[RMDB]
RNA sequence: GGGAACGACUCGAGUAGAGUCGAAAAAAAGCAUUUAUAUAGGUGCUGCUGCCUGCGGUCAUUACCUUGUCAAUGACCAUGUCCACAAACUUUGUGUUGAUGGCAAUGGUGUUGAUGCACUCAGAUGGAAAUCAAUUGAUUUCGAUCAAUUGAUUUCAAAAGAAACAACAACAACAAC
Reactivity to DMS in 0.01 (KOAc 150mM, MgCl2 10mM, bicine 150mM(pH8.5), 24C), signal-to-noise 9, nucleotides 027 to 126: a060a070a040g010c010a020u010u000u000a130u010a190u010a130g000g010u000g000c010u000g010c110u000g010c020c010u000g010c100g020g010u000c030a030u000u000a040c030c070u010u010g010u000c050a020a050u000g000a020c000c010a070u000g000u000c040c070a080c220a060a060a040c040u010u010u010g020u010g020u000u000g000a120u000g010g000c030a050a040u010g010g010u000g000u000u000g010a050u000g000c070a050c090u000c050a060g000a160u010g020
Reactivity to 2A3 in 0.01 (KOAc 150mM, MgCl2 10mM, bicine 150mM(pH8.5), 24C), signal-to-noise 6, nucleotides 027 to 126: a000a000a000g060c060a090u130u120u050a300u060a060u160a120g000g030u010g000c000u010g010c030u070g020c000c020u030g030c050g030g010u020c010a030u010u110a050c020c010u040u100g030u030c020a020a040u070g030a030c010c000a010u030g040u000c040c020a040c040a050a060a040c090u120u210u170g120u090g020u080u030g060a190u030g010g000c000a040a030u100g000g020u030g020u050u060g020a050u080g010c020a020c030u080c010a050g060a110u180g110
Record summary:
This 177-nucleotide RNA was probed chemically with DMS and 2A3. The 2A3 profile rests on 8,547 reads. 2A3 adducts were read by reverse transcription with SuperScript II with manganese. Values cover nucleotides 27 to 126. Conditions: 150 mM KOAc, 10 mM MgCl2 and 150 mM bicine (pH 8.5), 24 C. Values are in units of 0.01, from 0 to 300, in steps of 10.